[RMDB]
The data come from the RNA Mapping Database (RMDB), library M2RFPK. This 207-nucleotide RNA was probed chemically with 2A3 and DMS. For DMS, 3,124 sequencing reads were counted. The reactions ran in a buffer of 150 mM KOAc, 10 mM MgCl2 and 150 mM bicine (pH 8.5), at 24 C. For 2A3, 3,321 sequencing reads were counted.
RNA sequence: GGGAACGACUCGAGUAGAGUCGAAAAACGAGUCGUACGCGACUCGAAUGGUAUUGUCGGCGUAUAAGAACAAGACGUCACCGGACGCGACCGGGCUAAAAAGCGAAACGUCAUCUACGGAUGACGAAAAACGGACCUGGGUUCGCCCAGGUCCGAACUAAAAACAUUAGUUCGCUAAUGUUUUUAGAAAAGAAACAACAACAACAAC
Reactivity to 2A3 in 0.01 (KOAc 150mM, MgCl2 10mM, bicine 150mM(pH8.5), 24C), signal-to-noise 4, nucleotides 027 to 156: a000c010g000a000g000u000c010g020u040a040c240g000c010g140a000c000u000c010g010a020a060u080g010g070u180a130u180u190g120u110c060g010g020c020g010u050a050u030a160a150g090a140a030c080a090a070g070a030c000g000u010c010a010c020c010g000g000a010c000g000c000g000a010c000c010g000g000g000c030u070a030a020a000a000a000g000c000g040a130a030a020c020g000u000c000a000u010c010u010a020c190g110g000a010u000g000a010c000g020a050a010a000a000a000c010g000g000a000c000c000u000g010g000g060u030u070c170g070c020c010c000a000g000g000u000c000c000g000a000a000
Reactivity to DMS in 0.01 (KOAc 150mM, MgCl2 10mM, bicine 150mM(pH8.5), 24C), signal-to-noise 2, nucleotides 027 to 156: a120c010g020a040g000u000c020g080u000a110c130g070c040g010a020c000u000c010g020a020a040u000g000g020u000a030u040u000g020u000c000g010g020c060g040u000a120u000a110a180g000a090a140c170a170a080g050a070c080g020u010c020a100c030c000g000g010a070c070g010c090g010a100c020c000g030g000g020c120u000a000a020a030a150a060g000c010g000a080a080a130c020g010u010c000a000u000c010u000a130c300g080g010a030u010g000a030c000g010a000a010a040a120a130c010g000g000a010c010c000u000g000g030g020u000u000c280g030c010c000c010a010g010g010u000c000c000g000a000a040
For DMS the reverse transcriptase was MarathonRT.